[RMDB]
RNA sequence: GGGAACGACUCGAGUAGAGUCGAAAAGAUAUGGAGACCACUGUCUGUAGUAUCGUUCGGAAACGAACGGGAGUACGCAGAUAGAUUGGUCUCCUAAGUCAAACUAUACCGCUUCGGCGGUAUAGAACGACGAAAUCAAGUUCGCUUGAUUUCGUCGAAAAGAAACAACAACAACAAC
Reactivity to 2A3 in 0.01 (KOAc 150mM, MgCl2 10mM, bicine 150mM(pH8.5), 24C), signal-to-noise 1, nucleotides 027 to 126: g020a040u100a080u200g000g000a010g010a010c010c010a030c000u000g020u000c010u030g110u060a300g020u020a250u300c010g000u020u000c030g010g100a140a050a010c030g000a010a010c000g020g020g000a150g040u030a000c050g000c000a000g000a000u000a000g010a020u040u070g000g010u010c000u010c000c000u000a010a010g000u010c030a020a020a020c000u000a000u010a010c000c010g000c070u070u060c300g190g000c010g000g000u000a000u000a000g000a010a000
Reactivity to DMS in 0.01 (KOAc 150mM, MgCl2 10mM, bicine 150mM(pH8.5), 24C), signal-to-noise 1, nucleotides 027 to 126: g000a080u000a300u000g010g000a010g010a000c000c010a020c010u000g020u000c000u000g030u010a170g040u000a020u010c010g010u000u000c000g000g000a130a150a200c010g030a010a000c000g000g000g010a300g030u000a020c000g010c000a000g000a000u000a020g010a070u020u000g020g000u010c000u000c000c010u010a010a020g000u010c000a110a160a280c000u010a010u000a010c010c020g020c010u010u030c250g070g020c000g010g040u000a000u000a020g010a080a220